[RMDB]
RNA sequence: GGGAACGACUCGAGUAGAGUCGAAAAAGCAGCAAUGUAUCGCAGAUGAUGGAUUAGUUGCUAAAUGGAAUGUGUGUAUUUAUACGGAUGAGCCAGUUGAUUUUGAUGCUCCUAAGCUUUCAUAAAAAUAAAGGCUCAUUUUCGAAUGAGCCUUUAUAAAAGAAACAACAACAACAAC
Reactivity to 2A3 in 0.01 (KOAc 150mM, MgCl2 10mM, bicine 150mM(pH8.5), 24C), signal-to-noise 2, nucleotides 027 to 126: a000g020c020a000g000c000a000a010u100g190u290a050u020c010g040c140a150g050a280u300g000a010u040g260g000a000u040u030a120g000u050u000g000c000u110a140a150a040u130g060g010a080a050u070g020u000g000u020g030u160a200u120u300u040a100u000a100c100g070g020a080u020g000a020g010c020c010a030g000u140u080g010a230u050u020u100u200g010a030u070g000c050u100c010c070u090a150a000g000c010u000u060u080c080a090u160a180a130a010a010
Reactivity to DMS in 0.01 (KOAc 150mM, MgCl2 10mM, bicine 150mM(pH8.5), 24C), signal-to-noise 3, nucleotides 027 to 126: a020g020c010a020g010c010a060a020u020g010u010a030u010c050g000c270a140g000a110u060g000a040u000g000g000a020u000u000a100g020u000u000g000c020u010a070a130a110u010g010g010a060a030u020g010u020g000u000g020u000a040u020u040u030a060u000a050c090g000g000a050u020g020a050g000c010c020a080g000u000u000g000a120u020u020u000u000g000a060u010g010c010u000c010c030u010a030a060g010c110u010u000u000c020a050u010a000a030a020a110